[RMDB]
RNA sequence: GGGAACGACUCGAGUAGAGUCGAAAAGGAGUUAAGUUCGCUUAACUCCCACUACCGAGAAUGGGACUCGGUAUAUCGCAAUAACCCUUGGAAACAAGGGAACCACUGACGACUUCGGUCGUCAGAACGAGGCAAAAAAGUUCGCUUUUUUGCCUCGAAAAGAAACAACAACAACAAC
Reactivity to 2A3 in 0.01 (KOAc 150mM, MgCl2 10mM, bicine 150mM(pH8.5), 24C), signal-to-noise 2, nucleotides 027 to 126: g000g000a020g000u010u010a000a000g010u000u080c150g040c080u000u000a000a000c000u010c000c010c000a040c010u010a000c000c010g000a000g010a040a130u200g040g000g080a030c020u010c020g000g020u000a020u020a010u000c000g000c100a040a040u070a190a200c000c000c000u000u030g040g020a090a060a020c020a010a000g000g000g000a020a020c010c010a030c020u000g000a010c000g000a000c020u040u100c210g110g010u000c000g000u000c000a000g000a000a010
Reactivity to DMS in 0.01 (KOAc 150mM, MgCl2 10mM, bicine 150mM(pH8.5), 24C), signal-to-noise 1, nucleotides 027 to 126: g000g000a010g000u000u000a000a020g000u000u030c250g020c000u000u010a010a010c000u000c000c000c020a030c160u000a030c000c000g020a010g000a130a140u010g000g010g000a300c000u000c000g000g000u000a000u000a080u000c120g010c080a140a060u010a070a140c000c000c010u000u010g010g000a160a110a230c010a010a000g000g000g010a080a010c050c060a190c010u000g000a000c000g000a020c010u010u000c240g040g010u010c000g010u000c000a000g000a010a080